This 177-nucleotide RNA was probed chemically with 2A3 and DMS. Values cover nucleotides 27 to 126. The 2A3 profile rests on 1,161 reads. Conditions: 150 mM KOAc, 10 mM MgCl2 and 150 mM bicine (pH 8.5), 24 C.
RNA sequence: GGGAACGACUCGAGUAGAGUCGAAAACAUUGAUAACACUGAUAGUUUAAAAACACUGAAGGGUGGUUAUAUCCUUUUGGAUAGAAAACAACCUGAUUUAAUUAUUGCUGCUAGUGGUAGUGAAGUGUAUACAGGGCAUAUUCGUAUGCCCUGUAUAAAAAGAAACAACAACAACAAC
Reactivity to 2A3 in 0.01 (KOAc 150mM, MgCl2 10mM, bicine 150mM(pH8.5), 24C), signal-to-noise 2, nucleotides 027 to 126: c010a020u050u040g060a060u140a150a010c010a010c010u030g020a100u070a080g040u080u100u080a060a080a010a040a020c040a020c030u020g030a030a020g000g000g040u000g000g040u060u010a080u000a010u040c000c000u090u260u220u180g010g010a010u000a030g110a030a250a000a020c010a000a050c010c010u010g030a080u000u120u000a060a090u100u120a010u000u080g000c010u000g020c040u060a030g010u010g130g010u040a050g070u010g140a080a060g040u040g010
Reactivity to DMS in 0.01 (KOAc 150mM, MgCl2 10mM, bicine 150mM(pH8.5), 24C), signal-to-noise 4, nucleotides 027 to 126: c040a070u000u010g010a230u010a070a080c030a010c050u000g010a060u000a040g000u000u000u000a020a050a090a130a120c160a050c130u000g010a220a080g010g000g020u000g000g010u000u000a180u000a010u000c000c000u000u000u000u000g020g010a000u010a020g000a070a090a030a030c010a020a030c000c010u000g000a210u000u010u000a060a070u000u000a110u000u000g000c050u000g010c060u000a020g030u000g000g020u000a060g030u010g010a080a080g020u000g010